The data come from the RNA Mapping Database (RMDB), library M2RFPK. Structure probing data (2A3) for a 207-nucleotide construct.

[RMDB]
RNA sequence: GGGAACGACUCGAGUAGAGUCGAAAAAAGAAACAUUGUUUAUGCAAAGGCACUUCGCAAUGUCUGCUCAAACAUUGCUUAUUCAAACACGCUUCACAAUGUGCGACAAAGAAACAUUGUUAUAAGAUCCACUAAGUCGCCUUCGGGCGACUUAGAACUGAACUUUUUACUUCGGUAAAAAGUUCAGAAAAGAAACAACAACAACAAC
Reactivity to 2A3 in 0.01 (KOAc 150mM, MgCl2 10mM, bicine 150mM(pH8.5), 24C), signal-to-noise 2, nucleotides 027 to 156: a000a000g140a010a060a000c020a020u000u020g010u010u060u060a080u070g010c020a090a080a070g050g000c040a030c120u140u210c170g000c090a050a090u020g000u010c000u090g030c030u070c100a040a040a000c010a010u020u000g000c010u080u110a110u160u150c030a040a110a020c030a050c040g030c010u010u040c040a020c030a060a010u000g000u000g000c000g080a050c080a030a250a050g050a010a050a000c000a000u000u000g010u030u090a140u010a060a050g060a080u070c070c000a030c060u000a000a000g000u000c000g000c040c040u050u050c110g120g000g010c020g020a020c010u000u000a000g000a010a000

Values cover nucleotides 27 to 156.